[RMDB]
RNA sequence: GGGAACGACUCGAGUAGAGUCGAAAAGAUAUGGACAAUAGGGAGAACUGGGUCGGAAACGACCCUGUUCUUUGAUCUAUGUCCUAAGUCAAAGUCGCAUCUAGGAGUUCGCUCCUAGAUGCGACAAGAUAACAGGUGUGUUCGCACACCUGUUAUCAAAAGAAACAACAACAACAAC
Reactivity to 2A3 in 0.01 (KOAc 150mM, MgCl2 10mM, bicine 150mM(pH8.5), 24C), signal-to-noise 1, nucleotides 027 to 126: g010a020u050a000u070g000g000a000c030a110a150u090a220g000g000g020a010g000a020a010c020u030g000g000g010u000c000g010g020a020a020a000c000g000a000c000c010c000u000g010u000u010c010u050u060u020g000a000u000c000u020a030u000g000u000c010c000u000a060a010g030u020c060a140a030a040g000u000c000g030c000a020u000c010u000a000g000g030a020g010u100u220c300g100c140u000c010c000u000a000g000a010u000g000c000g000a010c000a000a000
Reactivity to DMS in 0.01 (KOAc 150mM, MgCl2 10mM, bicine 150mM(pH8.5), 24C), signal-to-noise 2, nucleotides 027 to 126: g000a020u000a200u010g000g000a020c000a030a030u020a000g000g000g000a020g010a010a020c000u010g000g000g020u010c000g000g000a040a040a110c000g020a000c000c000c000u000g010u000u000c000u000u000u010g000a100u010c000u000a300u000g000u000c000c000u000a030a100g000u000c020a100a070a140g010u000c000g030c000a000u000c000u000a000g000g000a030g030u000u010c300g000c000u000c010c000u010a000g010a000u000g000c000g000a000c000a010a040